Structure probing data (DMS and 2A3) for a 177-nucleotide construct. For 2A3 the reverse transcriptase was SuperScript II with manganese. For 2A3, 3,301 sequencing reads were counted. For DMS the reverse transcriptase was MarathonRT. Values are in units of 0.01, from 0 to 300, in steps of 10. The RNA was probed in 150 mM KOAc, 10 mM MgCl2 and 150 mM bicine (pH 8.5) at 24 C. Reactivities are given for positions 27 through 126.
RNA sequence: GGGAACGACUCGAGUAGAGUCGAAAAUGUUUAUUUCUAGCCUAGAUAAAGCAUCUGCCGCCUGAUUGUCCUGACCUUUGACAUGUCGGAUAUCGCUUGUGAACUGUGAUAUAUAGUCAAGGUGUCGAAUUACCGCGUAUUUCGAUACGCGGUAAUUAAAAGAAACAACAACAACAAC
Reactivity to DMS in 0.01 (KOAc 150mM, MgCl2 10mM, bicine 150mM(pH8.5), 24C), signal-to-noise 4, nucleotides 027 to 126: u030g010u020u010u010a070u010u000u010c020u010a100g000c040c020u000a090g010a090u010a110a120a080g000c030a030u010c030u020g000c030c000g010c010c000u000g000a110u020u010g010u000c030c010u000g030a040c020c010u020u000u010g000a040c030a070u020g000u020c130g000g010a060u010a010u000c010g020c010u000u030g010u030g000a100a070c190u010g020u000g000a080u000a020u020a090u030a080g010u000c010a030a030g000g010u040g020u010c030g000
Reactivity to 2A3 in 0.01 (KOAc 150mM, MgCl2 10mM, bicine 150mM(pH8.5), 24C), signal-to-noise 5, nucleotides 027 to 126: u100g030u010u090u040a130u030u080u020c080u060a070g020c010c010u040a090g030a190u140a100a140a000g010c000a030u020c030u070g030c000c000g030c020c020u060g020a080u060u040g030u040c000c020u050g010a030c000c000u030u050u040g040a030c060a040u110g090u130c060g070g030a010u020a010u010c010g030c040u140u160g100u120g220a120a080c080u060g000u010g030a030u010a010u020a010u030a060g020u020c010a000a010g020g040u120g050u110c030g030